[RMDB]
RNA sequence: GGGAACGACUCGAGUAGAGUCGAAAAGGACAGUAACGUUUUGCAAAAUUAUUUCAUCAAGAGCAACUUUGUCAAUUUCGAUUACAUCAUCAUUGUGCUGUGGCGCACCAUAUCCAAGAACGAAGAACUCAAUUUCACCAAGACGGACAUCAAGCUAUCAGAAAUAGCAAUUCGUUGCUAUUUCUGAAAAAGAAACAACAACAACAAC
Reactivity to DMS in 0.01 (KOAc 150mM, MgCl2 10mM, bicine 150mM(pH8.5), 24C), signal-to-noise 4, nucleotides 027 to 156: g000g030a110c050a090g030u000a040a080c060g020u000u010u010u000g000c030a060a070a080a100u000u010a060u000u010u000c040a140u000c160a100a150g010a110g020c020a040a060c030u000u000u000g000u000c060a050a090u000u000u000c050g000a180u000u000a050c060a110u010c040a090u010c050a160u010u010g010u000g000c020u010g040u000g020g010c070g020c060a070c050c040a070u000a050u000c040c030a040a130g010a060a060c060g000a100a070g010a080a060c060u000c040a020a090u010u000u000c030a060c050c010a050a090g010a080c080g000g020a050c040a060u000c040a080a060g000c050u000a080
Reactivity to 2A3 in 0.01 (KOAc 150mM, MgCl2 10mM, bicine 150mM(pH8.5), 24C), signal-to-noise 9, nucleotides 027 to 156: g070g010a010c040a050g030u070a100a040c050g020u040u050u040u070g030c030a050a060a060a070u150u080a170u070u190u120c090a120u050c060a100a050g010a020g080c020a020a060c030u070u080u070g070u080c050a070a120u020u070u110c060g040a050u050u100a040c030a060u080c000a010u030c010a040u060u110g020u020g020c020u030g030u070g070g000c010g000c020a010c020c020a030u060a040u080c040c020a050a030g010a050a030c070g010a030a050g020a060a010c030u010c080a040a100u030u080u070c030a040c040c000a020a010g030a010c020g020g020a010c010a040u080c030a070a010g030c020u050a030
Structure probing data (DMS and 2A3) for a 207-nucleotide construct.
For 2A3 the reverse transcriptase was SuperScript II with manganese.
Conditions: 150 mM KOAc, 10 mM MgCl2 and 150 mM bicine (pH 8.5), 24 C.
The data come from the RNA Mapping Database (RMDB), library OK3TST.